[RMDB]
RNA sequence: GGGAACGACUCGAGUAGAGUCGAAAAAUACACCAGCAGUAGGAUUCAGCGACCGUCACAACAAGGUUGUGCUGGUAUCCGACGGUCGUAUAGCCCUGUCUUGCAGGUUGCCUUGCACUGACGUGCCACACCAUUUACAGAUUCGUCUGUAAAUGAAUCUCCUCAUAUCGUUCGCGAUAUGAGGAGAAAAAGAAACAACAACAACAAC
Reactivity to 2A3 in 0.01 (KOAc 150mM, MgCl2 10mM, bicine 150mM(pH8.5), 24C), signal-to-noise 3, nucleotides 027 to 156: a010u090a010c030a010c020c000a000g020c020a010g050u140a030g000g080a080u120u070c050a010g010c000g010a000c000c000g030u030c040a070c050a190a120c110a190a130g050g000u070u030g060u080g050c010u030g030g030u030a050u060c000c020g000a000c000g000g000u010c010g010u030a040u160a090g050c000c000c030u050g020u060c040u040u190g010c010a030g010g000u110u160g040c000c000u030u060g000c020a040c070u080g060a040c060g050u040g030c000c030a090c010a030c010c020a010u000u010u000a000c000a000g000a030u040u080c120g120u000c070u000g010u000a000a000a000u000g010a000a050
Reactivity to DMS in 0.01 (KOAc 150mM, MgCl2 10mM, bicine 150mM(pH8.5), 24C), signal-to-noise 2, nucleotides 027 to 156: a170u010a030c050a140c000c000a060g040c030a090g000u000a020g010g000a120u000u000c050a180g000c000g010a020c010c050g020u000c050a250c080a070a090c070a050a120g010g010u010u000g030u000g070c000u020g030g050u000a030u000c050c020g000a060c050g030g010u020c070g020u000a080u000a100g040c060c000c000u010g030u000c040u020u010g020c010a070g050g000u010u000g000c020c150u010u010g030c000a040c090u050g030a110c210g020u010g020c010c060a120c040a080c120c000a030u000u000u000a000c010a000g000a080u000u000c300g020u000c020u000g010u000a000a000a010u000g020a060a090